[RMDB]
RNA sequence: GGGAACGACUCGAGUAGAGUCGAAAAUAUCGACGAUAUUAAGUAUUCACAAACGGGAAAGAAAUUAAUUAUUCAUAAUCCAGAGUUAGAAGAUAGUGGAAGAUACAACUGUUACGUUCAUUACGACGACGUUAGAAUCAAGAAUGAUAUCGUAGUACAGCAUGAUUCUUUUCGAAGAAUCAUGCUGAAAAGAAACAACAACAACAAC
Reactivity to 2A3 in 0.01 (KOAc 150mM, MgCl2 10mM, bicine 150mM(pH8.5), 24C), signal-to-noise 3, nucleotides 027 to 156: u160a030u040c030g040a030c080g000a010u010a010u070u050a100a020g030u000a090u060u100c030a070c030a080a130a020c110g000g010g020a100a060a030g040a050a170a020u090u140a080a060u080u100a090u100u150c020a020u080a200a060u040c010c010a020g010a020g170u080u110a050g020a140a000g020a080u130a050g090u070g050g030a020a010g010a010u070a070c070a060a010c110u070g030u060u030a020c020g020u030u040c020a060u070u120a030c080g020a010c030g000a000c000g040u020u050a030g000a080a010u090c050a030a040g090a030a100u060g000a000u010a010u030c040g030u010a030g010u000a050
Reactivity to DMS in 0.01 (KOAc 150mM, MgCl2 10mM, bicine 150mM(pH8.5), 24C), signal-to-noise 2, nucleotides 027 to 156: u010a090u000c020g060a080c090g040a120u000a020u000u000a040a050g000u010a080u000u000c060a140c040a030a080a070c010g020g020g000a040a140a130g010a050a020a150u000u010a040a160u020u010a130u010u010c000a140u000a000a170u000c030c060a070g000a100g020u000u000a100g010a090a140g030a060u000a130g000u000g020g030a080a080g000a070u000a050c070a040a070c070u010g000u000u000a050c030g020u000u000c020a130u020u000a030c030g010a040c030g000a040c020g080u000u000a090g010a070a100u000c060a070a080g000a070a070u000g040a020u000a010u000c050g010u020a070g010u000a200
This 207-nucleotide RNA was probed chemically with 2A3 and DMS. Source: RMDB library OK3TST, as collected in RNAgym. Conditions: 150 mM KOAc, 10 mM MgCl2 and 150 mM bicine (pH 8.5), 24 C.